[RMDB]
RNA sequence: GGGAACGACUCGAGUAGAGUCGAAAAGGGCUGGAUGUCGCUGUCACGGAAACCGCAAGUGACCUGGUACGGCUGGGACGGCGACCGCCUGACCACGAUACAGAACGACAGAACCCGCAUCCAGACGAAUGCUGCCUAUCUUCGGAUAGGCAGCAUUAAAAGAAACAACAACAACAAC
Reactivity to DMS in 0.01 (KOAc 150mM, MgCl2 10mM, bicine 150mM(pH8.5), 24C), signal-to-noise 1, nucleotides 027 to 126: g000g000g020c010u020g020g000a020u000g070u010c130g020c020u000g010u020c000a110c040g000g000a150a070a100c010c010g020c240a100a160g010u030g000a230c150c040u000g010g020u010a070c120g000g000c030u000g010g000g010a090c130g000g010c000g020a050c070c090g000c020c010u000g020a130c000c010a070c100g000a140u020a040c050a020g010a070a120c080g010a040c080a050g000a080a140c090c000c070g060c070a050u000c030c070a040g000a120c070g000
Structure probing data (DMS) for a 177-nucleotide construct. The data come from the RNA Mapping Database (RMDB), library OK2TRN. The DMS profile rests on 808 reads.